RNA sequence: GGGAACGACUCGAGUAGAGUCGAAAAGCCAUCGCGACGGCCAGCUUCGUGCUUGGUGUGUUCCAAAGAACCAAUGCGAAGGCUCGACCAAGACGACAUCCAAAACGGACUCAUCCGGCUGGGCGACAAGGCAAGAAUUAUUCGUAAUUCUUGCCUUAAAAGAAACAACAACAACAAC
Reactivity to DMS in 0.01 (KOAc 150mM, MgCl2 10mM, bicine 150mM(pH8.5), 24C), signal-to-noise 6, nucleotides 027 to 126: g010c020c010a110u000c020g000c020g010a140c190g010g010c020c050a040g020c030u000u000c110g010u010g010c080u000u000g040g010u000g020u010g000u000u000c040c170a110a120a160g010a060a060c040c060a080a080u000g000c010g010a050a060g020g000c020u000c060g010a110c020c010a060a070g000a080c050g000a060c140a080u000c030c040a040a040a100a130c120g010g000a060c220u010c130a110u000c040c020g000g010c040u000g000g000g010c040g000a080c180
Reactivity to 2A3 in 0.01 (KOAc 150mM, MgCl2 10mM, bicine 150mM(pH8.5), 24C), signal-to-noise 4, nucleotides 027 to 126: g030c000c000a020u020c030g020c030g050a080c060g110g010c010c000a010g000c010u070u050c090g150u130g100c050u050u050g020g010u030g040u050g020u090u000c050c020a200a140a010g060a050a030c040c030a110a070u170g040c030g010a050a030g060g010c020u010c020g080a050c010c020a020a010g050a020c030g020a020c010a030u040c020c030a060a100a090a050c070g020g030a020c020u030c120a190u060c050c010g020g020c000u030g010g020g010c010g000a030c050

Source information
The record gives the reactivity of an RNA of 177 nucleotides to DMS and 2A3. The DMS profile rests on 6,691 reads. For 2A3, 6,134 sequencing reads were counted. The reactions ran in a buffer of 150 mM KOAc, 10 mM MgCl2 and 150 mM bicine (pH 8.5), at 24 C.